Conditions: 150 mM KOAc, 10 mM MgCl2 and 150 mM bicine (pH 8.5), 24 C. Structure probing data (DMS) for a 177-nucleotide construct.

RNA sequence: GGGAACGACUCGAGUAGAGUCGAAAAGAUAUGGAUUGGAACGUUGUUUCUUGGAUUUACCGAACUACGUCUGCAUCGGAAACGAUGUUGACGCGGUUGUCAGAAACAACGUUCCAAUCCUAAGUCAGACUCUAAUGAUGUUCGCAUCAUUAGAGUCAAAAGAAACAACAACAACAAC
Reactivity to DMS in 0.01 (KOAc 150mM, MgCl2 10mM, bicine 150mM(pH8.5), 24C), signal-to-noise 2, nucleotides 027 to 126: g000a070u020a300u020g010g020a010u010u010g000g000a010a020c000g020u000u000g010u000u000u000c010u000u020g030g000a080u000u000u000a060c080c020g000a060a070c130u010a300c020g010u000c000u000g010c000a000u000c000g010g000a120a080a300c000g010a010u000g000u000u000g010a010c010g010c000g000g010u000u000g000u000c050a060g010a010a010a020c010a000a010c000g010u000u000c000c000a000a000u000c000c000u000a020a060g010u000c090a170